An RNA of 177 nucleotides, treated with 2A3 and DMS and read out base by base. It was measured as part of the RMDB libraries RFM100 and RFMREP. The reactions ran in a buffer of 150 mM KOAc, 10 mM MgCl2 and 150 mM bicine (pH 8.5), at 24 C. Values are in units of 0.01, from 0 to 300, in steps of 10.
[RMDB]
RNA sequence: GGGAACGACUCGAGUAGAGUCGAAAAAUCUAACCCUGAGCCGUGAAUCCGGCCAGAGGACCGUGUCAGCCGGUCAGUUUUACUGGGGCGGUAUCCUCCCAAAGAGUAACGGAGGAGCGCGAAGGUGUUAACCUGCUAAGUUCGCUUAGCAGGUUAAAAAAGAAACAACAACAACAAC
Reactivity to 2A3 in 0.01 (KOAc 150mM, MgCl2 10mM, bicine 150mM(pH8.5), 24C), signal-to-noise 5, nucleotides 027 to 126: a010u060c050u060a040a030c000c000c000u010g010a030g020c020c000g030u040g140a070a040u020c020c000g010g000c000c010a010g040a080g010g010a010c000c000g030u050g090u100c060a030g070c050c010g050g010u020c010a040g020u040u030u050u210a030c010u010g030g000g100g060c030g010g000u110a150u060c000c000u040c000c000c020a080a180a000g150a010g050u090a060a030c040g000g000a010g010g000a010g000c020g000c010g030a040a020g030g000u060g000
Reactivity to DMS in 0.01 (KOAc 150mM, MgCl2 10mM, bicine 150mM(pH8.5), 24C), signal-to-noise 8, nucleotides 027 to 126: a070u020c080u010a100a130c030c000c010u000g000a140g000c010c010g000u020g000a230a160u030c240c010g000g000c000c010a030g010a080g020g010a030c020c010g000u000g000u030c080a220g010c070c010g000g000u000c020a150g020u020u000u010u000a040c020u010g000g000g010g010c010g000g000u030a080u020c000c010u010c000c010c190a100a100a120g020a150g020u020a110a180c280g010g000a020g000g010a060g000c030g010c010g000a300a110g000g010u000g010